An RNA of 207 nucleotides, treated with 2A3 and DMS and read out base by base. The DMS profile rests on 3,584 reads. For DMS the reverse transcriptase was MarathonRT.

[RMDB]
RNA sequence: GGGAACGACUCGAGUAGAGUCGAAAACCGUAGGCACCAGGGGAGCGAUGCCAGCGAGUCUAACCUUCGAAAGAGGGUAAUCUUGUGAAACAUCGCAUCGAUCCAGGUGCCUAAACGGAAAGUUGUUGAGAGAGUGUUCGCACUCUCUCAACAACAACAAAUGUUGGAGGUUCGCCUCCAACAUUUGAAAAGAAACAACAACAACAAC
Reactivity to 2A3 in 0.01 (KOAc 150mM, MgCl2 10mM, bicine 150mM(pH8.5), 24C), signal-to-noise 2, nucleotides 027 to 156: c000c000g000u020a010g000g000c010a000c020c020a030g000g000g000g040a010g010c000g000a000u000g000c010c030a010g040c000g000a000g010u000c020u080a090a260c000c010u030u000c030g050a150a080a050g010a040g000g010g020u010a000a020u040c000u010u030g020u030g060a050a030a020c000a010u010c000g020c020a170u240c010g020a020u000c000c000a020g010g020u000g010c000c000u010a000a000a000c010g050g030a180a100a070g010u000u000g000u010u010g000a000g000a010g000a000g000u000g030u120u230c230g080c050a000c000u020c000u020c000u000c000a000a000c000a000a000c000a000a000
Reactivity to DMS in 0.01 (KOAc 150mM, MgCl2 10mM, bicine 150mM(pH8.5), 24C), signal-to-noise 2, nucleotides 027 to 156: c000c010g010u010a010g000g000c010a020c000c010a060g050g050g020g010a070g050c030g020a020u000g040c010c020a300g000c000g000a030g020u000c050u010a210a090c000c000u000u000c020g000a150a130a290g030a030g000g010g020u000a030a060u000c000u010u000g000u020g010a300a130a040c030a010u000c000g000c000a210u000c140g000a050u000c030c020a090g000g060u000g010c000c000u000a000a010a030c010g040g000a090a090a150g050u000u000g010u000u000g000a020g010a010g000a050g020u000g010u000u030c300g030c030a020c000u000c000u000c000u010c000a000a000c000a010a000c020a060a110